[RMDB]
RNA sequence: GGGAACGACUCGAGUAGAGUCGAAAAACAGUCAGUACGCUGACUGAGGGAAACGGGAGCCGGGCUUGGGACAAGAGCCAUCCCAAGUCCAAGGCCAAGUAGGCUCUACUGAUGGUACGCCAUCACAAAAACUGGUCUACCUUCGGGUAGACCAGAACCUCUUCCGUGUCUUCGGACACGGAAGAGGAAAAGAAACAACAACAACAAC
Reactivity to 2A3 in 0.01 (KOAc 150mM, MgCl2 10mM, bicine 150mM(pH8.5), 24C), signal-to-noise 2, nucleotides 027 to 156: a000c000a000g010u000c000a010g020u030a030c170g000c150u000g000a000c000u000g020a090g030g050g030a020a170a070c090g020g000g100a090g030c020c050g010g010g000c000u000u000g000g000g020a020c030a080a060g010a000g040c040c030a000u010c010c000c000a000a000g010u010c000c010a030a050g010g000c010c000a060a050g040u090a070g070g000c000u040c020u030a030c000u020g030a040u030g010g010u030a030c160g040c040c000a010u020c010a020c060a050a110a010a020a060c000u000g000g010u000c000u010a000c030c010u010u060c250g120g010g000u010a000g050a000c000c000a000g000a000a000